[RMDB]
Source: RMDB library RFM100, as collected in RNAgym.
An RNA of 177 nucleotides, treated with DMS and 2A3 and read out base by base.
Reactivities are rounded to 0.1 and cut off at 0 and 3.
Reactivities are given for positions 27 through 126.
For 2A3 the reverse transcriptase was SuperScript II with manganese.
RNA sequence: GGGAACGACUCGAGUAGAGUCGAAAAGUUUCUGAUCUACGUGUUGAUGGCGCUGUUGCUCACCGGCGUGCUGCGCCUGGUGGUCCAGGCCACCCCCCUGGGGCGCUGGAUCUGGCAUGAAGCGCUGCACCAAUUCCAGUUUCGACUGGAAUUGGUGAAAAGAAACAACAACAACAAC
Reactivity to DMS in 0.01 (KOAc 150mM, MgCl2 10mM, bicine 150mM(pH8.5), 24C), signal-to-noise 2, nucleotides 027 to 126: g010u000u000u020c030u010g020a130u020c060u020a070c180g020u000g010u000u010g000a060u000g000g000c000g000c030u000g030u010u000g010c030u000c240a070c000c000g000g000c020g030u050g030c180u090g030c040g020c010c000u030g020g020u020g000g030u000c000c000a020g010g000c010c050a200c020c000c010c020c050c040u020g000g000g010g010c260g000c000u000g000g000a030u010c140u020g000g030c010a030u000g030a070a010g000c010g070c040u000g000
Reactivity to 2A3 in 0.01 (KOAc 150mM, MgCl2 10mM, bicine 150mM(pH8.5), 24C), signal-to-noise 2, nucleotides 027 to 126: g040u020u020u030c030u020g100a160u050c020u120a100c100g080u030g050u110u060g100a150u090g010g000c000g000c000u040g030u160u080g020c000u020c030a010c000c010g000g000c010g010u080g120c210u170g010c030g000c020c000u000g000g020u030g000g030u020c010c000a010g030g030c000c000a120c010c030c000c000c000c020u130g000g000g070g000c150g000c020u010g020g000a030u010c100u060g020g000c000a000u050g140a050a010g020c010g000c000u020g000